[RMDB]
RNA sequence: GGGAACGACUCGAGUAGAGUCGAAAAACAUCACACUUCGGAUGCGGUUUCAGUUCUACGGCACAACGUUGGCAGUUCAUCCUACUUAGGGGUGUGGGUGUCCGGAGCGUCGUCAAAUUUUGGCAGUUCUUUGACCGAGUGGAAGCAGUGGAAGCAACCUUUAAGGACGGUUCGCCGUCCUUAAAGGAAAAGAAACAACAACAACAAC
Reactivity to 2A3 in 0.01 (KOAc 150mM, MgCl2 10mM, bicine 150mM(pH8.5), 24C), signal-to-noise 1, nucleotides 027 to 156: a000c010a030u060c040a020c000a000c080u050u150c060g040g050a080u080g020c050g050g090u010u000u040c070a080g020u030u000c080u100a010c000g090g030c030a010c020a250a000c020g000u040u030g010g000c020a010g000u040u060c020a020u010c010c040u010a130c090u180u190a120g000g040g010g000u010g000u030g000g030g040u080g020u020c000c000g010g000a070g010c070g020u080c010g030u050c060a080a100a120u120u190u190u030g060g040c030a000g000u030u060c060u020u050u070g020a050c020c020g010a030g010u060g060g020a070a000g050c060a010g030u030g040g020a010a020g020c000a030a090